[RMDB]
RNA sequence: GGGAACGACUCGAGUAGAGUCGAAAAUGAAGCAAAUCCAUAAUUGCCAAUGAUGAGCAAUUCGCUAUUGCCGCCUAAAAACGGUUAGCCGGGGCUGCUAGAGCCUUGUUACCAAAGAUGGCCGGCGUUACGGCAUGAUGGUUCGCCAUCAUGCCAAACCCAAUACUACGUUCGCGUAGUAUUGGGUAAAAGAAACAACAACAACAAC
Reactivity to DMS in 0.01 (KOAc 150mM, MgCl2 10mM, bicine 150mM(pH8.5), 24C), signal-to-noise 2, nucleotides 027 to 156: u010g010a100a100g010c040a070a080a160u000c040c020a100u010a030a040u000u000g000c010c020a090a220u000g010a170u020g000a070g010c000a010a060u000u010c040g020c030u020a070u000u000g020c000c020g010c000c040u020a070a050a100a130a070c060g000g000u000u000a050g030c090c060g050g000g000g010c030u010g040c080u000a130g010a090g010c020c010u000u000g030u010u000a140c060c010a060a040a160g030a170u010g000g020c020c050g000g010c050g000u010u000a060c100g010g000c000a040u010g010a020u000g010g020u000u000c300g030c010c010a010u000c000a000u000g000c000c010a000a020
Reactivity to 2A3 in 0.01 (KOAc 150mM, MgCl2 10mM, bicine 150mM(pH8.5), 24C), signal-to-noise 5, nucleotides 027 to 156: u140g020a070a000g060c070a030a060a100u130c060c020a050u090a070a050u020u010g000c010c020a100a130u300g110a130u070g020a140g040c010a010a030u090u060c060g030c050u080a060u080u180g000c000c000g000c010c000u070a100a060a020a030a020c050g000g030u060u050a020g010c030c020g040g000g000g000c010u060g030c110u120a070g030a000g230c010c000u010u060g030u050u060a010c010c010a050a050a040g110a070u090g000g040c150c020g010g000c020g040u050u120a040c080g000g000c030a000u000g010a000u000g010g030u010u050c130g040c040c000a000u000c010a010u010g000c000c000a010a000
Chemical mapping of a 207-nucleotide RNA with DMS and 2A3. High DMS reactivity at an A or C suggests that its Watson-Crick edge is free. For DMS, 4,650 sequencing reads were counted. The reactions ran in a buffer of 150 mM KOAc, 10 mM MgCl2 and 150 mM bicine (pH 8.5), at 24 C. High 2A3 reactivity points to a flexible backbone, as in loops and unpaired stretches. For 2A3 the reverse transcriptase was SuperScript II with manganese.